[RMDB]
RNA sequence: GGGAACGACUCGAGUAGAGUCGAAAACGCCGUCCAGGACCUCGGGCAUCCGGUCGCCGAGCGCCUCGACGAAUUCCUUCGGAUACUCGCCCUUGAAGAUCGGAUCGAAGAAAGCACCAUUGUGGAAAGGGCUAUAUGAUUUCGAUCAUAUAGCCCUAAAAGAAACAACAACAACAAC
Reactivity to DMS in 0.01 (KOAc 150mM, MgCl2 10mM, bicine 150mM(pH8.5), 24C), signal-to-noise 2, nucleotides 027 to 126: c230g020c090c000g000u000c030c070a050g020g000a070c060c000u000c000g020g010g020c070a030u000c020c000g040g000u000c000g010c040c030g010a040g010c260g000c050c000u000c240g000a090c040g000a130a090u040u000c030c030u010u000c110g000g060a090u030a070c050u010c060g010c000c000c020u070u000g010a090a090g020a020u000c050g000g000a110u040c060g010a110a040g010a080a060a080g020c010a040c000c060a110u010u050g030u000g000g020a100a070
Reactivity to 2A3 in 0.01 (KOAc 150mM, MgCl2 10mM, bicine 150mM(pH8.5), 24C), signal-to-noise 4, nucleotides 027 to 126: c040g020c020c010g010u010c000c000a040g020g170a280c000c020u070c060g050g010g000c010a040u040c050c020g020g010u020c040g000c050c000g000a020g020c060g020c000c000u020c020g030a030c000g020a010a080u050u030c010c000u020u080c060g050g030a030u080a090c010u000c050g020c020c020c040u020u060g080a090a030g010a060u050c000g030g020a040u050c070g000a050a040g090a050a140a020g020c030a040c070c000a080u070u100g040u040g050g000a060a090